[RMDB]
The record gives the reactivity of an RNA of 177 nucleotides to 2A3. Conditions: 150 mM KOAc, 10 mM MgCl2 and 150 mM bicine (pH 8.5), 24 C. Values cover nucleotides 27 to 126. Reactivities are rounded to 0.1 and cut off at 0 and 3.
RNA sequence: GGGAACGACUCGAGUAGAGUCGAAAACGACAAAUACAUGUUAGUAGGUAUCGGAAGCAGUAUCGGUGCUUCACUAAUAGGACGCCUUACAUCAUCAAUUUGCCUAAUGCUAUGGCAUAUAACCAAAACCGCCUAUGGUGUUCGCACCAUAGGCGGUAAAAGAAACAACAACAACAAC
Reactivity to 2A3 in 0.01 (KOAc 150mM, MgCl2 10mM, bicine 150mM(pH8.5), 24C), signal-to-noise 1, nucleotides 027 to 126: c010g150a000c070a010a050a000u170a010c050a090u060g010u110u100a070g000u060a000g050g050u060a020u010c160g050g000a000a000g120c060a020g080u130a050u140c060g000g000u010g010c040u010u020c070a060c070u000a030a020u030a090g130g030a000c130g040c020c020u100u060a060c030a090u050c000a060u050c050a080a150u000u000u100g010c020c010u170a140a080u150g010c020u070a070u140g010g040c030a000u060a010u070a120a080c010c000a030a000a020